[RMDB]
RNA sequence: GGGAACGACUCGAGUAGAGUCGAAAAUACACGCAGUGGCGAAUCUUGGAACCCAAUUGUUGGUAGACAAUCUUACAGAGAUGGAAGUACUAUUGUGUUUUCAGAUAUACCUACAAAUGGCUCGUCGGCAAUAUCAGGAUACCAAGCUGUCAAUGCACACAUAAACUAGCUUCGGCUAGUUUAUGUGAAAAGAAACAACAACAACAAC
Reactivity to DMS in 0.01 (KOAc 150mM, MgCl2 10mM, bicine 150mM(pH8.5), 24C), signal-to-noise 3, nucleotides 027 to 156: u000a090c070a100c100g000c050a090g040u000g010g030c020g000a110a090u010c040u000u010g030g010a110a150c070c010c020a090a140u000u010g050u000u000g010g010u010a070g010a140c070a050a080u000c040u010u010a120c070a080g010a160g010a090u000g000g020a070a070g010u000a070c040u010a100u000u000g050u000g010u000u000u000u000c020a090g020a060u010a100u010a040c030c010u020a300c050a030a060a070u000g040g000c030u000c080g020u000c030g000g050c020a040a040u010a110u000c030a040g000g020a120u000a060c000c010a010a210g020c050u000g010u010c020a060a100u000g000c080a300
Reactivity to 2A3 in 0.01 (KOAc 150mM, MgCl2 10mM, bicine 150mM(pH8.5), 24C), signal-to-noise 6, nucleotides 027 to 156: u130a000c060a010c120g030c010a010g020u010g030g010c030g040a060a090u040c030u020u040g020g020a050a040c020c010c000a030a060u020u020g020u020u030g030g020u030a050g020a080c040a060a090u040c030u070u110a120c110a070g120a020g020a130u050g020g020a040a050g030u030a040c040u060a130u170u210g030u020g020u070u050u020u070c010a000g020a010u040a000u020a140c000c010u030a030c020a020a070a090u060g050g010c020u020c070g100u010c010g070g000c030a030a010u040a040u180c080a040g020g020a020u020a110c020c000a030a010g010c030u040g050u040c010a020a040u050g010c030a010
Conditions: 150 mM KOAc, 10 mM MgCl2 and 150 mM bicine (pH 8.5), 24 C. The record gives the reactivity of an RNA of 207 nucleotides to DMS and 2A3. Values cover nucleotides 27 to 156. The data come from the RNA Mapping Database (RMDB), library OK3TST. For 2A3, 4,574 sequencing reads were counted. DMS adducts were read by reverse transcription with MarathonRT.